[RMDB]
RNA sequence: GGGAACGACUCGAGUAGAGUCGAAAAUCUCAACUGGGCCGCGGUGCCGUCUUCUGCAAACACACUUUUUUUAUUCCGUGCCUUUUGGGAAUACUUGCGGUAUUUUUUGAUUUUAGUAGAAGAGGAGCGGUAUCGGAUGGUUCGCCAUCCGAUACCGAAAAGAAACAACAACAACAAC
Reactivity to 2A3 in 0.01 (KOAc 150mM, MgCl2 10mM, bicine 150mM(pH8.5), 24C), signal-to-noise 1, nucleotides 027 to 126: u000c030u030c030a020a010c080u130g040g050g050c000c010g000c040g040g010u070g050c040c020g170u000c000u010u000c030u010g020c010a000a050a000c000a000c010a160c130u000u240u080u010u040u160u180a050u110u000c000c000g000u000g100c000c000u300u300u290u300g060g050g040a160a000u060a190c050u160u240g050c000g040g020u050a100u000u090u200u000u000u060g070a090u000u000u000u080a150g010u010a000g010a000a020g000a050g030g030a000g030